[RMDB]
Chemical mapping of a 207-nucleotide RNA with 2A3. Source: RMDB library M2RFPK, as collected in RNAgym. The reactions ran in a buffer of 150 mM KOAc, 10 mM MgCl2 and 150 mM bicine (pH 8.5), at 24 C.
RNA sequence: GGGAACGACUCGAGUAGAGUCGAAAAAGACGGAAACCCAUCGACGGUCACCAGAUGCUGCAUCACCUGAUCACUGAUGGCUCAACGGUAUCCGGCGGUACAACUGAAUACUUGUAGCUGCCUUUUGAAAAGGAGUUCAUCUUCGGAUGAACUCCAAGGUGAUAUACCCCUUCGGGGGUAUAUCACCAAAAGAAACAACAACAACAAC
Reactivity to 2A3 in 0.01 (KOAc 150mM, MgCl2 10mM, bicine 150mM(pH8.5), 24C), signal-to-noise 1, nucleotides 027 to 156: a020g060a010c040g080g040a100a010a050c010c000c000a060u030c000g060a110c110g020g000u010c000a010c040c000a020g010a070u080g020c120u140g020c020a040u030c010a050c000c010u040g030a050u120c040a000c070u040g020a040u010g010g000c040u030c020a110a040c010g010g020u090a100u030c050c010g010g010c010g020g000u020a020c000a000a040c080u190g060a110a090u170a200c040u040u050g000u000a060g090c000u010g060c040c000u130u260u130u120g160a110a160a000a050g010g000a000g000u010u000c000a000u000c000u030u090c180g060g000a000u000g000a000a000c000u020c000c000a010a000